[RMDB]
Source: RMDB library OK1LIB, as collected in RNAgym. An RNA of 177 nucleotides, treated with 2A3 and read out base by base. The 2A3 profile rests on 502 reads.
RNA sequence: GGGAACGACUCGAGUAGAGUCGAAAAACAGUCAAUAACCCACGAUGUCAAAGAACAAAAGUGUUGGAUCCACUUUUGACAGGUUACCAUGUGCCACAUCGACCCGUGACACUCUGUUCAUCAGAGAUCGUACCGUGGGCUUCGGCCCACGGUACGAAAAAGAAACAACAACAACAAC
Reactivity to 2A3 in 0.01 (KOAc 150mM, MgCl2 10mM, bicine 150mM(pH8.5), 24C), signal-to-noise 1, nucleotides 027 to 126: a000c100a010g020u050c050a010a020u090a140a030c000c040c000a000c000g040a040u080g010u070c000a080a170a000g020a150a090c000a030a070a140a000g000u090g040u090u080g100g060a000u030c050c000a000c000u040u000u000u010g060a050c040a010g000g000u070u070a030c000c000a000u050g090u100g020c010c000a070c000a110u000c000g010a010c040c000c000g070u020g100a000c050a060c000u000c040u030g070u020u160c020a210u150c040a120g000a030g000a030
The reactions ran in a buffer of 150 mM KOAc, 10 mM MgCl2 and 150 mM bicine (pH 8.5), at 24 C.